[RMDB]
RNA sequence: GGGAACGACUCGAGUAGAGUCGAAAAUAGGUCGUGUUCGCACGACCUAAGAUAAAAUGCAUAAAAUGCCAGUAACCGGAAACACAAGGGAGUGCACCUGGCCUACGAUGUCGUUCGCGACAUCGAACAGUUCCUGGUGAUUCGUCACCAGGAACUGAAAAGAAACAACAACAACAAC
Reactivity to DMS in 0.01 (KOAc 150mM, MgCl2 10mM, bicine 150mM(pH8.5), 24C), signal-to-noise 1, nucleotides 027 to 126: u000a010g010g000u010c000g000u010g010u040u020c130g030c010a010c020g010a000c000c010u000a000a010g000a130u010a030a070a050a080u000g020c040a080u010a020a040a060a160u000g010c010c080a030g000u000a050a160c030c020g000g000a070a050a040c140a040c130a080a080g000g000g010a030g000u000g000c070a080c170c020u000g000g030c060c120u000a090c000g010a020u010g010u000c030g020u010u010c210g000c030g010a000c010a000u000c000g020a070a130
Reactivity to 2A3 in 0.01 (KOAc 150mM, MgCl2 10mM, bicine 150mM(pH8.5), 24C), signal-to-noise 2, nucleotides 027 to 126: u050a000g000g000u010c010g000u010g000u040u060c190g050c090a000c000g000a000c000c000u000a000a000g000a000u040a010a100a020a040u030g020c000a000u130a220a300a060a010u110g000c000c050a020g040u040a070a070c020c010g010g000a180a160a020c040a000c010a080a070g060g000g020a050g080u030g020c000a010c020c000u030g020g020c000c020u070a060c030g000a000u000g000u000c000g000u000u020c100g030c010g080a000c000a000u020c000g010a090a010